[RMDB]
RNA sequence: GGGAACGACUCGAGUAGAGUCGAAAAGCUUGUCCAGGACCAGAAAAUCUGCCGGAUUCCGCAUAUCGUGAUCGGAUUCAAUCAUUAGGAUCUCGGGCUUCAUCCUGGCCUGAGAGAAAUGACGAUCCCUCGGGAUACUCUUCGGAGUAUCCCGAGGAAAAGAAACAACAACAACAAC
Reactivity to 2A3 in 0.01 (KOAc 150mM, MgCl2 10mM, bicine 150mM(pH8.5), 24C), signal-to-noise 2, nucleotides 027 to 126: g030c050u090u110g040u020c100c010a130g030g060a170c090c040a030g110a030a090a030a050u060c070u070g000c000c000g000g030a000u090u010c010c010g060c040a100u020a010u250c080g110u030g030a060u000c030g060g040a030u160u040c020a070a010u020c020a070u000u060a070g140g000a020u020c010u000c040g010g000g000c000u150u030c000a120u080c000c050u000g030g000c000c020u000g000a000g000a000g000a030a060a000u050g010a000c040g030a020u030c000
Chemical mapping of a 177-nucleotide RNA with 2A3.